[RMDB]
RNA sequence: GGGAACGACUCGAGUAGAGUCGAAAAGUCGGCGUUGCGCUGAUGCGUCUGGUACUCUAGAUACUGCAUAUCUGCUCGCUCGCACUCUCCACAUGACGCAUUGGGAUGCCCAAAGCAAAGCUGCUGUUCACUUCAACCCAUUCGUGGGUUGAAGUGAAAAAGAAACAACAACAACAAC
Reactivity to DMS in 0.01 (KOAc 150mM, MgCl2 10mM, bicine 150mM(pH8.5), 24C), signal-to-noise 1, nucleotides 027 to 126: g020u020c030g010g040c050g010u000u000g000c000g010c060u000g020a000u010g000c050g060u000c000u000g030g000u000a030c090u030c050u000a070g000a060u070a140c040u000g010c050a140u000a020u000c020u020g040c050u000c070g000c100u000c010g000c100a050c080u000c100u000c020c030a070c070a070u060g040a110c040g000c030a010u000u000g000g030g020a090u020g010c020c000c040a130a160a050g010c020a040a090a080g000c010u020g000c050u000g000u010
Reactivity to 2A3 in 0.01 (KOAc 150mM, MgCl2 10mM, bicine 150mM(pH8.5), 24C), signal-to-noise 5, nucleotides 027 to 126: g100u060c020g010g010c050g070u070u070g010c050g000c050u010g010a020u030g010c000g010u010c010u060g020g050u080a120c030u010c020u090a040g050a150u060a130c020u100g040c010a060u030a080u070c020u070g010c010u000c020g010c000u020c020g000c010a040c030u010c000u000c010c000a040c010a070u150g020a020c010g000c020a030u040u060g040g040g020a050u140g060c000c000c010a080a050a000g000c020a040a080a030g020c010u040g010c010u020g040u020